The data come from the RNA Mapping Database (RMDB), library OK2TST. An RNA of 177 nucleotides, treated with 2A3 and DMS and read out base by base. Values are in units of 0.01, from 0 to 300, in steps of 10. The reactions ran in a buffer of 150 mM KOAc, 10 mM MgCl2 and 150 mM bicine (pH 8.5), at 24 C.
RNA sequence: GGGAACGACUCGAGUAGAGUCGAAAAUUUUUGUGGGGCAGAGGGUAGAGCAUUAGGCAUUUGUAAUUUGCCAUCCUGCUGAUGUCACCACCCUCCUUGCCUGGCUGCCUGGCUACCUAGCUGCCUCCACUAUCAAGUACUUCGGUACUUGAUAGUGAAAAGAAACAACAACAACAAC
Reactivity to 2A3 in 0.01 (KOAc 150mM, MgCl2 10mM, bicine 150mM(pH8.5), 24C), signal-to-noise 5, nucleotides 027 to 126: u090u100u030u060u120g100u110g020g010g000g000c010a010g010a030g000g010g010u020a010g000a020g050c040a080u090u140a050g010g010c010a020u040u050u220g150u110a140a170u030u060u140g020c000c010a020u040c010c010u040g030c040u090g030a050u060g050u050c020a020c070c000a030c000c010c000u000c020c010u020u050g020c000c010u010g020g020c020u020g000c010c010u030g070g000c010u010a020c000c000u030a060g050c010u010g000c000c000u020c010
Reactivity to DMS in 0.01 (KOAc 150mM, MgCl2 10mM, bicine 150mM(pH8.5), 24C), signal-to-noise 9, nucleotides 027 to 126: u000u010u010u010u010g020u010g020g000g010g010c010a020g020a300g000g000g010u000a010g010a150g020c040a070u000u000a040g010g010c010a060u010u010u010g020u020a060a120u010u000u000g010c040c020a060u010c020c080u000g000c110u010g010a060u000g000u000c040a090c070c050a090c040c020c020u000c020c050u010u000g010c030c020u000g020g010c100u000g000c030c080u000g000g000c010u000a020c020c010u000a120g010c010u000g000c010c000u000c020